[RMDB]
RNA sequence: GGGAACGACUCGAGUAGAGUCGAAAAGCCACCAGCCCUGCUCUCUGCAGUGUUCUAUUGUGGAUUGCUUGUGUGCUGGCAGGCUACUACUGGUAAGAAUGGCUAGUGUCAGCAGGGAUGGCUCCUCGACGAUCUAGAGGUUCGCCUCUAGAUCGUCAAAAGAAACAACAACAACAAC
Reactivity to DMS in 0.01 (KOAc 150mM, MgCl2 10mM, bicine 150mM(pH8.5), 24C), signal-to-noise 1, nucleotides 027 to 126: g000c020c010a180c020c010a140g000c020c000c000u000g000c010u000c070u000c010u010g010c040a060g010u030g000u000u000c110u050a060u000u000g000u010g000g000a010u000u000g000c020u060u010g050u000g030u000g000c000u000g000g060c050a020g000g000c000u000a050c060u010a110c050u010g000g000u000a060a070g000a070a050u000g020g000c040u020a140g000u000g020u000c030a050g010c050a090g010g010g020a120u000g010g000c040u000c010c020u010c120
Reactivity to 2A3 in 0.01 (KOAc 150mM, MgCl2 10mM, bicine 150mM(pH8.5), 24C), signal-to-noise 2, nucleotides 027 to 126: g020c000c000a000c010c010a000g030c010c000c010u020g000c010u030c010u010c010u000g000c010a020g010u000g080u150u090c150u160a080u090u000g020u010g000g010a060u030u040g010c030u080u030g060u000g070u090g120c020u030g030g010c030a130g000g020c010u030a020c010u050a020c000u060g130g010u200a140a070g040a160a100u060g080g000c030u060a070g130u020g040u070c020a000g000c000a010g020g070g040a080u030g030g050c010u010c000c020u040c080
An RNA of 177 nucleotides, treated with DMS and 2A3 and read out base by base. DMS adducts were read by reverse transcription with MarathonRT. For 2A3, 1,799 sequencing reads were counted. The RNA was probed in 150 mM KOAc, 10 mM MgCl2 and 150 mM bicine (pH 8.5) at 24 C. The DMS profile rests on 1,024 reads. For 2A3 the reverse transcriptase was SuperScript II with manganese.